This 207-nucleotide RNA was probed chemically with DMS. The DMS profile rests on 4,458 reads. The RNA was probed in 150 mM KOAc, 10 mM MgCl2 and 150 mM bicine (pH 8.5) at 24 C. It was measured as part of the RMDB library M2RFPK.
RNA sequence: GGGAACGACUCGAGUAGAGUCGAAAACAGGUGGCCCAGACCUUCAAGGCUACGGUGCGUUGCGACGCACGGUCUGAUUCUUCACAACGACGUUCACCGCGUCUUCUUCCAUCCCCCUGGGGCAGUGUAUAACCAGCAGCCUUCGGGCUGCUGGUAAACCAUGGUGUAGUUUCGACUACACCAUGGUAAAAGAAACAACAACAACAAC
Reactivity to DMS in 0.01 (KOAc 150mM, MgCl2 10mM, bicine 150mM(pH8.5), 24C), signal-to-noise 2, nucleotides 027 to 156: c030a080g010g010u000g010g020c030c020c080a110g000a080c000c000u000u010c060a080a160g000g000c010u000a040c000g030g020u000g020c050g060u010u000g010c150g040a090c000g010c040a020c030g020g000u000c040u000g020a230u000u010c070u000u020c020a140c070a090a130c050g010a090c050g000u010u010c040a100c040c010g020c070g000u000c020u000u000c060u000u000c020c020a120u010c000c000c020c030c030u000g010g000g030g010c050a020g000u020g020u010a100u000a070a060c010c000a010g080c000a020g020c000c000u010u020c300g060g030g020c000u000g000c000u000g010g010u000a000a040